[RMDB]
RNA sequence: GGGAACGACUCGAGUAGAGUCGAAAACGAGUGUGUGUAGCUCUCAAGACAGCAGCUCGUCUUGAAUCUCCAUCCACAGGUACAGAACUUGUUCAACUGUUAAUGCAAGGAGUUUCUCGAGCUAUCAGUACAGCUCAUGGUUCGCCAUGAGCUGUACAAAAGAAACAACAACAACAAC
Reactivity to 2A3 in 0.01 (KOAc 150mM, MgCl2 10mM, bicine 150mM(pH8.5), 24C), signal-to-noise 1, nucleotides 027 to 126: c060g010a110g000u060g020u030g000u030g080u160a000g000c000u050c000u000c010a020a070g090a080c060a030g090c000a000g020c030u020c060g000u010c050u020u030g030a020a020u050c000u010c000c010a060u030c020c030a030c020a030g000g020u070a030c000a040g070a160a050c040u110u100g000u150u090c010a130a080c020u020g020u140u140a110a010u120g010c100a130a130g040g000a090g000u010u040u000c030u000c010g000a000g020c020u050a110u140c050a040
Reactivity to DMS in 0.01 (KOAc 150mM, MgCl2 10mM, bicine 150mM(pH8.5), 24C), signal-to-noise 2, nucleotides 027 to 126: c030g010a060g040u000g000u010g050u010g000u000a070g010c050u020c060u000c060a030a040g000a050c050a140g000c070a100g000c080u000c080g020u000c020u000u000g000a040a070u010c000u000c020c010a070u000c140c100a070c030a030g000g000u020a010c060a070g030a070a100c070u020u010g000u000u000c100a140a050c000u010g010u000u000a210a110u000g010c120a140a180g000g000a060g010u000u000u000c050u000c030g010a070g010c030u000a030u000c140a100
About this RNA
An RNA of 177 nucleotides, treated with 2A3 and DMS and read out base by base. The RNA was probed in 150 mM KOAc, 10 mM MgCl2 and 150 mM bicine (pH 8.5) at 24 C. DMS adducts were read by reverse transcription with MarathonRT.